[RMDB]
RNA sequence: GGGAACGACUCGAGUAGAGUCGAAAAUUGCCUCAUCUAAGUAAGACUACCCGCUGAACUUAAGCAUAUCAGUAAGCGGAGGAAAAGAAACUAACAAGGAUUCCGUCAGUAACGGCGAGUGAAGACGAUCAACGUACCACUUCGGUGGUACGUUGAUAAAAGAAACAACAACAACAAC
Reactivity to 2A3 in 0.01 (KOAc 150mM, MgCl2 10mM, bicine 150mM(pH8.5), 24C), signal-to-noise 2, nucleotides 027 to 126: u100u190g100c030c050u130c030a060u000c130u080a030a100g000u050a030a200g080a110c090u100a020c020c020c090g020c000u000g000a090a040c030u170u120a130a000g080c020a100u060a050u270c000a000g000u050a000a000g000c000g000g000a060g040g020a000a140a000a000g080a000a050a020c020u020a000a000c050a050a070g030g000a110u180u070c040c010g000u030c050a020g040u140a100a000c060g030g000c060g010a000g000u050g030a000a000g100a030c040g000
Reactivity to DMS in 0.01 (KOAc 150mM, MgCl2 10mM, bicine 150mM(pH8.5), 24C), signal-to-noise 2, nucleotides 027 to 126: u030u090g000c010c010u000c090a050u000c040u010a050a300g020u000a080a010g000a150c010u000a260c020c000c000g000c020u000g010a120a100c110u000u000a050a110g050c270a080u010a020u030c070a060g000u000a040a030g000c000g000g000a080g070g000a140a010a060a100g000a090a000a010c030u000a040a060c110a030a200g010g000a100u040u010c080c030g000u010c030a010g000u030a130a110c070g000g020c110g000a120g000u030g010a040a060g000a010c120g000